Background: The record gives the reactivity of an RNA of 177 nucleotides to 2A3 and DMS. It was measured as part of the RMDB libraries RFM100 and RFMREP. Values cover nucleotides 27 to 126.

[RMDB]
RNA sequence: GGGAACGACUCGAGUAGAGUCGAAAACAAUUAGGCUGCUUGAUGCGGCCAAUUGCUGACAGAAAAGCUACCUUAGGGAUAACAGAGUCGUCACUCGCAAGAGCACAUAUCGACCGAGUGGCUUGCUGCAAAUGCACAGUUUCGACUGUGCAUUUGCAAAAGAAACAACAACAACAAC
Reactivity to 2A3 in 0.01 (KOAc 150mM, MgCl2 10mM, bicine 150mM(pH8.5), 24C), signal-to-noise 4, nucleotides 027 to 126: c030a000a000u010u040a130g010g000c000u010g000c010u110u300g150a170u300g040c000g000g000c000c000a000a000u000u000g000c020u090g060a100c020a030g120a030a170a040a020g060c040u040a070c010c010u070u100a050g000g070g030a010u060a110a010c050a020g070a020g130u090c050g000u010c020a020c040u000c020g000c040a030a000g000a010g090c130a020c010a220u300a070u050c010g050a040c030c040g010a010g000u030g010g040c000u000u050g010c000u030
Reactivity to DMS in 0.01 (KOAc 150mM, MgCl2 10mM, bicine 150mM(pH8.5), 24C), signal-to-noise 1, nucleotides 027 to 126: c010a060a010u000u000a130g020g000c000u000g000c000u010u100g000a200u100g050c000g020g000c010c020a010a000u000u000g000c080u000g000a130c130a140g000a100a030a060a030g000c020u020a000c010c100u000u030a040g000g000g040a100u000a170a050c070a100g030a020g000u000c070g000u000c060a110c000u000c000g000c050a000a200g000a040g040c150a140c270a100u000a100u000c040g000a250c300c050g000a020g020u000g000g010c000u070u010g000c010u000